[RMDB]
RNA sequence: GGGAACGACUCGAGUAGAGUCGAAAAUCCAUCGACUCGUUCAAGCACCAGCUCGAAGAAGCUUAGCUAAUUUAUCUUAGAAAAUAAUGAAAAAGCUAUGCUUCUCAAGAAGGUGCAUGAACAAGUUAGCAAAGUACACUUUCGAGUGUACUUUGCUAAAAGAAACAACAACAACAAC
Reactivity to 2A3 in 0.01 (KOAc 150mM, MgCl2 10mM, bicine 150mM(pH8.5), 24C), signal-to-noise 2, nucleotides 027 to 126: u040c030c010a060u110c060g070a000c020u010c020g000u010u000c020a020a020g040c000a010c010c000a010g040c000u010c000g180a190a150g010a000a010g050c000u000u000a000g010c000u000a010a300u010u030u060a100u020c030u030u070a000g110a150a230a010a050u140a020a090u150g050a000a100a070a000a000g010c000u000a010u060g010c000u000u030c000u010c000a000a020g000a000a020g000g000u020g000c000a010u030g000a010a000c000a000a000g050u000u000